[RMDB]
RNA sequence: GGGAACGACUCGAGUAGAGUCGAAAACUAGUCGUAUCAUCGUGGCAAGUUGUGGCCGAGACGUGUCAGCAUCCCUUCUUCCGAGAGCCACUGCCGGUGAUGCACACCUUACGAAGGAGGAUGUGGCGACUAAUGCUCCUUUCGAGGAGCAUUAGUCAAAAGAAACAACAACAACAAC
Reactivity to 2A3 in 0.01 (KOAc 150mM, MgCl2 10mM, bicine 150mM(pH8.5), 24C), signal-to-noise 2, nucleotides 027 to 126: c070u030a070g110u010c040g030u080a020u050c050a010u030c020g230u190g170g040c080a160a150g110u150u060g070u090g020g050c000c010g000a040g040a060c130g060u040g080u120c060a020g060c030a050u030c040c000c000u010u010c020u030u020c090c050g120a110g000a010g110c020c020a040c020u010g000c020c000g070g000u040g000a070u030g010c020a010c010a020c060c010u130u110a080c070g010a010a010g030g020a000g040g000a010u000g030u010g040g040c040
Reactivity to DMS in 0.01 (KOAc 150mM, MgCl2 10mM, bicine 150mM(pH8.5), 24C), signal-to-noise 3, nucleotides 027 to 126: c060u000a120g010u000c070g000u000a040u000c040a060u010c020g000u020g020g050c080a120a080g020u000u000g030u010g000g030c000c010g000a110g000a100c150g020u000g000u010c070a190g010c030a030u000c080c020c030u000u010c040u000u000c020c080g000a160g000a090g000c010c010a040c040u000g000c030c030g020g000u020g000a040u000g000c070a080c060a110c080c030u010u020a170c200g010a060a030g010g010a050g000g000a050u000g020u000g000g030c090